[RMDB]
Conditions: 150 mM KOAc, 10 mM MgCl2 and 150 mM bicine (pH 8.5), 24 C.
This 177-nucleotide RNA was probed chemically with 2A3.
2A3 adducts were read by reverse transcription with SuperScript II with manganese.
Reactivities are given for positions 27 through 126.
For 2A3, 584 sequencing reads were counted.
The data come from the RNA Mapping Database (RMDB), library OK1LIB.
RNA sequence: GGGAACGACUCGAGUAGAGUCGAAAACUCUUGAAUAGUUUUUACAAGCAUAACAAUCACAUUCAGGGUCAAGUGGAGUAAAGUCUUCAGCAUAAGUUGCAUUUCUAACUACUACUUUACCUUGGCUCAGGCGAUACGAUUUCGAUCGUAUCGCCUGAAAAGAAACAACAACAACAAC
Reactivity to 2A3 in 0.01 (KOAc 150mM, MgCl2 10mM, bicine 150mM(pH8.5), 24C), signal-to-noise 2, nucleotides 027 to 126: c030u030c050u080u150g090a220a160u040a240g020u010u000u070u080u230a090c060a070a030g100c050a030u230a250a010c050a300a000u260c040a070c060a100u170u190c040a030g000g030g000u050c040a020a030g000u000g020g000a020g000u020a000a300a000g050u010c000u110u060c050a030g000c020a030u080a300a190g000u090u000g050c020a020u050u000u000c000u000a000a190c010u300a130c000u050a000c000u000u000u000a010c000c010u000u000g000g050c000u000